[RMDB]
An RNA of 207 nucleotides, treated with 2A3 and read out base by base.
RNA sequence: GGGAACGACUCGAGUAGAGUCGAAAAACACCGGACUAGGCGUACGCGCCUAGGCCGGUGAGGGUCAGACGAGCAGACACCCAUUGAAGUUCUGCUCUACCGUUAAAAGGAAGUAAACCAUCAUGAAAGAAGUGCGCUUGGUUCGCCAAGCGCACAACCAUUACAUCAACUUCGGUUGAUGUAAUGGAAAAGAAACAACAACAACAAC
Reactivity to 2A3 in 0.01 (KOAc 150mM, MgCl2 10mM, bicine 150mM(pH8.5), 24C), signal-to-noise 2, nucleotides 027 to 156: a000c000a000c000c000g000g000a000c000u000a000g010g000c010g040u030a020c290g000c010g010c080c000u000a000g000g020c020c000g000g000u000g000a040g010g000g010u040c040a020g020a190c080g000a070g000c020a000g000a000c000a030c020c020c050a070u030u300g110a030a000g010u100u000c000u000g010c000u000c000u000a000c000c000g060u080u090a120a100a060a030g080g070a100a010g040u160a070a160a100c020c050a040u170c070a080u280g210a110a060a040g080a180a040g020u010g000c000g000c020u030u000g040g030u010u110c130g050c100c000a030a010g000c000g000c000a010c000a000a000
The reactions ran in a buffer of 150 mM KOAc, 10 mM MgCl2 and 150 mM bicine (pH 8.5), at 24 C.